About this RNA: The record gives the reactivity of an RNA of 177 nucleotides to 2A3. The data come from the RNA Mapping Database (RMDB), library RFM100. 2A3 adducts were read by reverse transcription with SuperScript II with manganese.

[RMDB]
RNA sequence: GGGAACGACUCGAGUAGAGUCGAAAAACGAUACCAGCACGUACGCGUGCUGGUAUCGAUUUCCGAUUUUUCGGCUCGCAGAAGAGCACUGAAAUAGCCUGCUCGGAGCUACGGCUCCGAGCAGGCAGACUAUGUGAUUGUUCGCAAUCACAUAGUCAAAAGAAACAACAACAACAAC
Reactivity to 2A3 in 0.01 (KOAc 150mM, MgCl2 10mM, bicine 150mM(pH8.5), 24C), signal-to-noise 2, nucleotides 027 to 126: a000c000g000a010u000a000c000c010a030g010c000a000c000g060u100a040c300g010c010g130u000g000c020u000g040g000u000a000u010c000g000a010u010u020u000c000c010g030a020u040u020u060u050u080c010g030g000c000u000c000g070c060a090g080a300a040g000a100g050c100a090c110u140g050a000a060a050u130a040g000c010c000u010g020c000u010c000g000g000a000g000c000u070a060c210g080g000c000u070c010c140g000a000g000c020a000g000g000c000a010